[RMDB]
RNA sequence: GGGAACGACUCGAGUAGAGUCGAAAACGCGCUUAGUUGACGAGGAGGAGGUUUAUCGAGGUUUUCGGCGGAUGCCUCCCGGCUGGAGCGAUGACAGCCGCAAGUCCUCUCUUAAAACAAAGGGGUGAUUCUUUGGCUGUUUCGACAGCCAAAGAAUAAAAGAAACAACAACAACAAC
Reactivity to DMS in 0.01 (KOAc 150mM, MgCl2 10mM, bicine 150mM(pH8.5), 24C), signal-to-noise 2, nucleotides 027 to 126: c040g000c070g000c000u020u050a180g000u010u000g000a080c120g010a030g000g000a000g000g000a040g000g030u010u030u060a090u000c020g010a100g050g000u000u010u070u040c010g010g050c190g000g000a060u040g000c020c040u010c030c010c010g000g000c000u000g000g000a080g020c100g040a090u020g000a110c030a040g010c000c000g030c030a060a090g000u020c000c000u000c020u000c040u000u010a020a080a050a180c190a020a070a100g000g020g000g010u000g010
Reactivity to 2A3 in 0.01 (KOAc 150mM, MgCl2 10mM, bicine 150mM(pH8.5), 24C), signal-to-noise 2, nucleotides 027 to 126: c030g030c020g000c050u080u070a010g010u040u100g070a020c040g030a030g020g010a010g010g000a010g010g040u040u120u060a170u140c040g000a110g000g100u020u010u140u190c030g080g010c020g110g000a000u040g010c000c000u000c000c000c000g020g000c010u040g000g020a080g100c050g040a050u090g040a030c000a000g010c010c000g050c010a040a040g030u020c000c000u000c000u000c010u010u100a040a050a050a010c030a000a010a030g040g000g000g000u080g030
Background
An RNA of 177 nucleotides, treated with DMS and 2A3 and read out base by base. In probing experiments dimethyl sulfate is read out at A N1 and C N3, which are open when not base-paired. For 2A3 the reverse transcriptase was SuperScript II with manganese. The RNA was probed in 150 mM KOAc, 10 mM MgCl2 and 150 mM bicine (pH 8.5) at 24 C. Reactivities are given for positions 27 through 126. DMS adducts were read by reverse transcription with MarathonRT.